The record gives the reactivity of an RNA of 207 nucleotides to 2A3. The RNA was probed in 150 mM KOAc, 10 mM MgCl2 and 150 mM bicine (pH 8.5) at 24 C. The data come from the RNA Mapping Database (RMDB), library RNAMAK.
RNA sequence: GGGAACGACUCGAGUAGAGUCGAAAAGGGGUCGUCUCCCGAUCUCUCCCUUGUCAGAUCGCCUGAAGCCUCCACGGGACCCGAUCUUGGAUUUAGGGAGAUCUCGGAAGAGACGACGGAGGCACCCAAAAGAUGAGAUCCUUCGGGAUCUCAUCAACACUUUACAACGGUUCGCCGUUGUAAAGUGAAAAGAAACAACAACAACAAC
Reactivity to 2A3 in 0.01 (KOAc 150mM, MgCl2 10mM, bicine 150mM(pH8.5), 24C), signal-to-noise 2, nucleotides 027 to 156: g050g000g020g010u000c000g000u000c000u000c020c010c000g030a020u030c020u000c000u000c090c000c000u020u030g060u050c070a020g010a010u020c020g030c040c030u130g090a230a150g040c070c030u130c080c030a040c030g020g000g040a090c160c190c040g020a010u040c000u020u190g290g000a060u300u300u170a030g000g010g020a010g000a010u030c060u010c010g000g080a250a130g010a100g000a010c000g000a000c000g000g010a010g000g020c040a040c000c010c000a040a110a020a040g010a000u010g000a000g000a000u000c070c110u260u260c300g000g000g020a000u000c000u000c000a000u000c000a000a000